[RMDB]
RNA sequence: GGGAACGACUCGAGUAGAGUCGAAAAGAUAUGGACAUUUGGCGUAGCCGCGGUCGGAAACGACCGGCGGUAGUACGCAAAUGUCCUAAGUCAAAAUCAUAUGCAGCAGUUCGCUGCUGCAUAUGAAGACCAUAUACUUCUUCGGAAGUAUAUGGUCAAAAGAAACAACAACAACAAC
Reactivity to DMS in 0.01 (KOAc 150mM, MgCl2 10mM, bicine 150mM(pH8.5), 24C), signal-to-noise 4, nucleotides 027 to 126: g000a050u000a300u000g000g000a020c010a000u000u000u010g040g040c000g020u000a080g010c000c000g040c000g010g000u000c000g020g000a070a070a150c000g010a010c010c010g050g050c000g010g020u000a050g030u000a010c010g020c000a000a000a000u000g010u000c000c000u000a000a080g010u000c030a110a100a120a220u000c000a000u000a000u000g000c000a000g010c000a010g020u000u010c300g010c000u000g000c000u000g000c000a000u010a000u000g010a040a160
Reactivity to 2A3 in 0.01 (KOAc 150mM, MgCl2 10mM, bicine 150mM(pH8.5), 24C), signal-to-noise 4, nucleotides 027 to 126: g010a020u060a020u120g000g000a000c010a010u020u030u110g300g180c020g030u040a040g020c020c010g010c010g010g000u000c020g010g010a050a060a040c020g000a010c010c070g010g020c010g000g010u040a050g070u040a000c000g000c010a000a000a000u000g000u000c000c000u000a040a010g030u010c030a040a020a010a300u050c000a000u010a000u010g000c000a000g010c000a000g010u070u200c230g160c220u000g000c000u000g000c000a000u000a000u010g000a010a010

This 177-nucleotide RNA was probed chemically with DMS and 2A3. Source: RMDB library TTRDES, as collected in RNAgym. The RNA was probed in 150 mM KOAc, 10 mM MgCl2 and 150 mM bicine (pH 8.5) at 24 C. For DMS the reverse transcriptase was MarathonRT. Values cover nucleotides 27 to 126.